[RMDB]
RNA sequence: GGGAACGACUCGAGUAGAGUCGAAAAGUAAGCGAUAGUCUGUCAUCACUGUAGCAACUGGAAUAUUAAUGUUAAAUUGCUCAGUUAGUACCGACAUAACUGGUGUAGGAAACGUUAAUAAUAUUAACUACGUCUACCACUUCGGUGGUAGACGUAGAAAAGAAACAACAACAACAAC
Reactivity to 2A3 in 0.01 (KOAc 150mM, MgCl2 10mM, bicine 150mM(pH8.5), 24C), signal-to-noise 2, nucleotides 027 to 126: g160u190a030a010g010c000g100a120u110a060g000u040c030u030g060u100c010a000u050c010a070c000u050g050u080a070g040c070a070a130c050u140g050g090a110a060u030a030u000u020a060a000u060g000u000u100a020a300a150u010u010g020c070u070c000a020g000u000u010a040g050u090a140c020c140g070a000c080a140u030a040a000c000u020g000g080u210g140u000a040g000g050a100a000a000c000g030u040u050a000a030u060a110a010u100a130u130u040a040a030
Reactivity to DMS in 0.01 (KOAc 150mM, MgCl2 10mM, bicine 150mM(pH8.5), 24C), signal-to-noise 1, nucleotides 027 to 126: g000u040a040a150g010c000g000a060u070a000g000u000c130u030g000u040c020a050u000c040a050c030u000g000u020a110g040c080a160a000c120u010g000g000a000a150u050a020u000u000a000a070u000g050u000u000a000a110a150u030u000g000c000u000c020a000g020u000u010a000g020u040a220c110c260g050a000c120a070u010a050a000c010u000g030g000u000g000u000a020g030g000a110a010a020c020g030u000u010a000a050u000a120a180u020a140u000u000a040a200
An RNA of 177 nucleotides, treated with 2A3 and DMS and read out base by base. The reactions ran in a buffer of 150 mM KOAc, 10 mM MgCl2 and 150 mM bicine (pH 8.5), at 24 C. It was measured as part of the RMDB library OK1LIB.